Structure probing data (DMS and 2A3) for a 207-nucleotide construct. For DMS, 3,179 sequencing reads were counted. The 2A3 profile rests on 3,247 reads. DMS adducts were read by reverse transcription with MarathonRT.

RNA sequence: GGGAACGACUCGAGUAGAGUCGAAAACCGAAGUUCGCUUCGGGCCACGACCUUUGUGGAGCGUGUAGGGAGAAAUCAUCACUCCCAUUGGGAGUGAUACGUGAUUUCGAAGAACUACAUACGCUCCACUCUGGUACAUGACCCCUUUCGAGGGGAAUACGAUUGCAAAUUUCGAUUUGCAAUCGUAAAAAGAAACAACAACAACAAC
Reactivity to DMS in 0.01 (KOAc 150mM, MgCl2 10mM, bicine 150mM(pH8.5), 24C), signal-to-noise 2, nucleotides 027 to 156: c010c010g000a070a300g020u000u010c200g030c040u000u000c010g000g030g030c010c010a040c000g010a090c000c010u000u000u000g010u000g020g000a010g010c010g060u000g000u000a050g000g040g050a300g030a040a010a010u000c030a090u000c020a050c000u000c000c010c000a180u000u000g020g000g010a050g040u000g000a060u000a010c200g050u020g010a030u000u000u000c020g030a110a150g000a080a230c000u000a010c000a070u000a040c030g010c020u000c000c000a000c000u010c010u000g000g030u000a060c040a060u020g000a080c000c000c000c050u000u000u000c100g020a100g020g000g050g010a050a040
Reactivity to 2A3 in 0.01 (KOAc 150mM, MgCl2 10mM, bicine 150mM(pH8.5), 24C), signal-to-noise 3, nucleotides 027 to 156: c000c000g000a010a000g010u110u250c240g030c130u000u020c010g000g010g040c020c010a100c050g070a020c000c000u000u010u010g000u000g000g000a010g000c000g010u020g000u000a010g000g020g000a040g030a010a010a000u000c000a000u020c000a000c000u010c000c010c070a180u100u280g000g000g000a000g000u000g000a030u020a050c100g140u110g000a000u000u000u000c010g030a120a030g020a000a020c000u000a000c010a050u190a060c030g000c000u000c010c000a000c000u000c000u000g000g000u020a070c000a030u160g110a120c000c000c000c000u060u080u150c220g130a030g000g000g000g000a000a010